[RMDB]
RNA sequence: GGGAACGACUCGAGUAGAGUCGAAAAGAUAUGGAGGAAUUGUCGAACUACGUCUAUAAUCGGAAACGAUUAAACGACGCGGUUAAUCCUCCUAAGUCAAAGUGCACGUAGUUCGCUACGUGCACAACAUUAUAGAUGGGUUCGCCCAUCUAUAAUGAAAAGAAACAACAACAACAAC
Reactivity to DMS in 0.01 (KOAc 150mM, MgCl2 10mM, bicine 150mM(pH8.5), 24C), signal-to-noise 9, nucleotides 027 to 126: g010a040u000a300u000g000g010a010g010g000a060a120u000u010g020u010c230g010a050a020c020u000a070c000g000u000c000u000a300u000a010a000u000c000g010g000a100a080a200c000g010a010u000u000a000a060a140c300g000a010c000g020c010g010g000u000u000a110a110u000c000c000u000c000c000u000a020a100g000u010c040a060a080a100g010u000g010c000a010c000g010u000a010g010u000u010c250g010c000u000a010c000g010u000g000c000a000c000a020a080
Reactivity to 2A3 in 0.01 (KOAc 150mM, MgCl2 10mM, bicine 150mM(pH8.5), 24C), signal-to-noise 9, nucleotides 027 to 126: g020a010u060a030u130g000g000a010g010g040a070a180u190u110g140u190c060g020a090a070c090u110a060c170g010u000c010u020a080u010a030a010u000c000g030g010a050a030a030c010g000a000u000u000a010a020a020c150g000a010c020g000c010g050g000u040u070a020a050u020c000c000u000c000c000u020a110a010g010u010c060a140a060a090g000u000g010c000a000c000g000u000a000g020u070u070c240g020c200u000a000c000g000u000g000c000a000c000a000a000